The record gives the reactivity of an RNA of 177 nucleotides to 2A3 and DMS.
[RMDB]
RNA sequence: GGGAACGACUCGAGUAGAGUCGAAAAUGGUGUUAAGUGGAAUAAGUGGCCAGAUAUACAUAUAUGUACAGGGGGCUACAUAUAUGUAUAUGCCCCCUCGCGUCAGUAUAAGUAGGUAUAAGGUGGACGUAUAUCCGCAGUUCGCUGCGGAUAUACGAAAAGAAACAACAACAACAAC
Reactivity to 2A3 in 0.01 (KOAc 150mM, MgCl2 10mM, bicine 150mM(pH8.5), 24C), signal-to-noise 2, nucleotides 027 to 126: u090g020g000u080g010u050u100a110a110g060u100g050g100a120a050u130a140a060g070u090g130g010c030c000a060g110a000u010a000u000a000c030a000u010a000u000a020u010g020u000a010c110a130g030g000g000g020g000c020u010a000c000a000u050a000u020a010u010g040u000a010u000a000u010g020c000c000c000c000c000u020c020g030c010g010u000c000a020g100u050a020u020a170a050g130u150a040g120g000u040a080u010a140a000g030g020u010g040g000a010
Reactivity to DMS in 0.01 (KOAc 150mM, MgCl2 10mM, bicine 150mM(pH8.5), 24C), signal-to-noise 2, nucleotides 027 to 126: u020g000g000u010g030u020u020a100a130g000u030g000g000a060a040u010a040a090g020u060g000g000c030c170a090g010a060u020a010u000a000c000a020u000a010u010a020u010g010u000a030c070a150g000g030g020g020g000c160u000a020c010a020u010a020u000a010u000g010u000a030u000a020u010g000c020c000c010c000c000u020c030g010c040g060u000c060a060g000u010a030u020a010a090g010u000a030g010g000u000a080u000a070a070g000g010u010g000g030a160
Overview:
The DMS profile rests on 2,949 reads.